RNA sequence: GGGAACGACUCGAGUAGAGUCGAAAAGUUAGCUGAAAAUCUCAAAUAUUUGGUUCAAUUUGUCUAUCUACUACCAGCUGCAAUGCUUCACGCCAGAAUACUUUACAUAUUGCUCUGGAAGCAUAGAAGUAAAUAGUCGUUUCGACGACUAUUUACUAAAAGAAACAACAACAACAAC
Reactivity to 2A3 in 0.01 (KOAc 150mM, MgCl2 10mM, bicine 150mM(pH8.5), 24C), signal-to-noise 2, nucleotides 027 to 126: g020u000u020a030g020c020u040g040a080a070a110a200u040c060u040c080a040a120a070u180a070u080u090u100g040g020u010u060c040a100a070u020u060u120g030u000c040u010a050u000c020u070a030c020u030a050c000c020a000g000c100u030g000c040a020a000u030g010c000u030u050c040a030c080g040c020c000a030g040a040a030u060a120c080u140u140u090a040c030a040u190a050u100u090g010c010u010c020u090g120g060a090a000g000c010a020u060a040g140a070
Reactivity to DMS in 0.01 (KOAc 150mM, MgCl2 10mM, bicine 150mM(pH8.5), 24C), signal-to-noise 4, nucleotides 027 to 126: g020u000u010a050g030c040u020g000a070a100a100a120u000c040u000c080a080a090a080u010a080u010u000u000g020g010u010u000c050a060a110u000u000u010g010u010c030u000a080u000c030u000a050c050u000a100c080c020a030g010c070u010g010c070a060a030u000g000c090u000u000c100a100c140g010c160c080a080g000a060a070u000a090c150u000u010u010a080c140a120u010a040u000u000g010c040u000c020u000g010g000a080a030g010c060a040u010a030g010a080

Source information
This 177-nucleotide RNA was probed chemically with 2A3 and DMS. The reactions ran in a buffer of 150 mM KOAc, 10 mM MgCl2 and 150 mM bicine (pH 8.5), at 24 C.